An RNA of 177 nucleotides, treated with 2A3 and DMS and read out base by base.
RNA sequence: GGGAACGACUCGAGUAGAGUCGAAAAGCACGCACCGAGGCGCUAGAGUCGCACUUUAGCCAGAAAAUUAUCCAAAGCGAUGCCUUAGCGCAAACGCUUAAUGAGCGCUAUGAAGCCUUUAGCCAGCGGUUACGCAGAAGUUCGCUUCUGCGUAACCAAAAGAAACAACAACAACAAC
Reactivity to 2A3 in 0.01 (KOAc 150mM, MgCl2 10mM, bicine 150mM(pH8.5), 24C), signal-to-noise 1, nucleotides 027 to 126: g000c000a010c130g000c000a030c040c050g030a070g020g000c050g000c040u020a010g020a050g050u140c040g040c030a070c020u080u020u050a020g000c020c000a010g240a000a110a010a010u210u090a060u100c060c050a070a070a000g000c010g040a040u060g000c000c000u090u180a020g000c000g000c050a020a080a060c010g020c030u070u130a070a040u220g030a050g010c030g000c020u020a050u080g080a060a010g010c010c000u060u100u020a020g020c000c000a020g130c000
Reactivity to DMS in 0.01 (KOAc 150mM, MgCl2 10mM, bicine 150mM(pH8.5), 24C), signal-to-noise 1, nucleotides 027 to 126: g010c020a030c160g020c030a090c080c030g000a060g000g010c080g000c010u010a040g010a100g000u000c110g000c070a300c080u010u000u000a030g010c120c080a180g000a100a070a070a040u010u010a100u030c020c060a020a110a120g010c010g000a120u000g020c010c030u000u010a050g000c040g100c000a020a070a010c120g010c010u000u020a060a080u000g000a080g010c060g010c000u000a030u000g000a060a090g000c070c020u000u000u010a100g000c000c120a190g000c130